[RMDB]
RNA sequence: GGGAACGACUCGAGUAGAGUCGAAAAAUCAGUGGGCUUAGCCCAGACUUAUGAGAGAAGUAAAGACCUCUCAGCCCCUCCACCUUGGAGUGCCCUAUUCGGAGCACUGCAGUUCCCGAUAGAAAGGGAGUAACUAUAUCUUCGGAUAUAGUUACUCAAAAGAAACAACAACAACAAC
Reactivity to 2A3 in 0.01 (KOAc 150mM, MgCl2 10mM, bicine 150mM(pH8.5), 24C), signal-to-noise 4, nucleotides 027 to 126: a010u090c040a020g140u050g000g010g020c050u160u210a050g030c010c000c010a000g020a010c030u110u130a050u170g010a000g000a000g010a060a020g020u130a120a050a100g060a040c010c000u000c000u020c000a060g100c010c010c000c000u000c000c010a060c000c020u060u060g030g040a010g000u010g000c000c000c020u100a230u110u250c130g020g000a070g020c000a000c020u070g030c010a010g000u000u000c010c000c010g030a040u050a080g190a030a070a010g160g060
Reactivity to DMS in 0.01 (KOAc 150mM, MgCl2 10mM, bicine 150mM(pH8.5), 24C), signal-to-noise 5, nucleotides 027 to 126: a060u000c080a090g010u010g010g010g010c010u010u010a170g010c000c000c000a040g000a100c080u000u000a090u000g000a020g000a010g000a030a040g000u000a080a060a150g000a250c190c000u000c000u000c000a050g000c010c000c000c000u000c020c010a110c170c120u010u000g010g010a010g020u010g010c000c000c000u000a200u010u020c160g010g010a070g010c010a010c010u000g000c020a080g010u000u000c000c000c000g020a180u010a070g010a060a070a130g010g010